[RMDB]
RNA sequence: GGGAACGACUCGAGUAGAGUCGAAAAGUUACCGCUCGUGGCCAGCUCGGGCAUCGAUCGCUCCUCGUCUGGAUUUGGUCUCGCUCUUCGUACCCUGCCCAGACAUCGGGCAGUACGCAACGGUUGAGCUAGUUUGAUCUUUCGAGAUCAAACUAGCAAAAGAAACAACAACAACAAC
Reactivity to 2A3 in 0.01 (KOAc 150mM, MgCl2 10mM, bicine 150mM(pH8.5), 24C), signal-to-noise 2, nucleotides 027 to 126: g030u050u080a070c020c020g030c090u010c040g020u090g070g040c020c040a050g030c060u030c040g020g050g000c030a030u060c030g040a040u030c020g020c040u050c010c000u020c030g080u020c030u040g110g040a140u050u060u100g050g020u030c020u000c040g050c000u040c000u050u060c010g020u040a030c040c020c000u000g010c020c010c010a140g050a140c070a130u120c060g000g010g000c030a010g000u000a010c030g000c040a080a080c070g080g010u020u100g020a000
Reactivity to DMS in 0.01 (KOAc 150mM, MgCl2 10mM, bicine 150mM(pH8.5), 24C), signal-to-noise 3, nucleotides 027 to 126: g020u000u000a080c050c000g000c090u000c040g030u000g010g020c040c040a120g000c070u000c070g040g020g000c050a070u010c060g010a060u000c110g010c060u000c020c010u000c080g010u010c030u000g010g020a160u000u010u000g020g010u000c010u000c050g030c050u000c030u000u000c010g010u000a060c050c110c060u000g000c000c000c000a140g010a180c230a070u000c130g010g000g010c000a030g000u000a020c120g010c120a050a040c090g020g000u010u000g010a140
An RNA of 177 nucleotides, treated with 2A3 and DMS and read out base by base.
For DMS, 2,611 sequencing reads were counted.
For DMS the reverse transcriptase was MarathonRT.
The 2A3 profile rests on 2,419 reads.